Source: RMDB library OK2TRN, as collected in RNAgym. The record gives the reactivity of an RNA of 177 nucleotides to 2A3 and DMS. Values are in units of 0.01, from 0 to 300, in steps of 10. For DMS the reverse transcriptase was MarathonRT. The reactions ran in a buffer of 150 mM KOAc, 10 mM MgCl2 and 150 mM bicine (pH 8.5), at 24 C. For 2A3 the reverse transcriptase was SuperScript II with manganese. Values cover nucleotides 27 to 126.
RNA sequence: GGGAACGACUCGAGUAGAGUCGAAAAAGCGCUCCUAAAGCAGUGUUUGACCGAUGCACCUUCCGCGCUGUCGCUACUCAACACGCUCUUCGCUAUCGGAGACCGCUUCGAUCCGAGUGACGCGGACUCUAAGUCAGGGUUUCGACCCUGACUUAGAAAAAGAAACAACAACAACAAC
Reactivity to 2A3 in 0.01 (KOAc 150mM, MgCl2 10mM, bicine 150mM(pH8.5), 24C), signal-to-noise 2, nucleotides 027 to 126: a000g010c020g020c040u080c020c000u090a100a060a030g050c070a030g030u010g040u130u120u090g050a050c050c020g050a070u070g000c030a040c020c040u060u080c040c010g020c010g010c060u040g040u060c020g000c040u080a050c010u010c040a030a060c020a040c090g030c000u050c040u100u070c060g030c040u060a090u140c000g040g000a020g030a090c000c080g140c040u040u020c040g030a030u020c030c020g060a020g030u100g030a040c050g020c020g030g060a050c010
Reactivity to DMS in 0.01 (KOAc 150mM, MgCl2 10mM, bicine 150mM(pH8.5), 24C), signal-to-noise 3, nucleotides 027 to 126: a040g010c070g020c020u000c030c060u000a070a150a110g000c060a070g020u000g010u000u010u010g010a100c040c040g000a070u000g020c060a100c050c070u010u000c040c060g030c030g010c040u000g000u010c040g000c060u000a040c090u010c050a100a080c090a070c030g020c090u000c060u000u000c050g010c090u000a100u000c050g010g010a060g010a110c130c140g010c030u000u000c050g000a080u000c210c030g000a070g010u000g000a090c140g020c020g000g010a110c240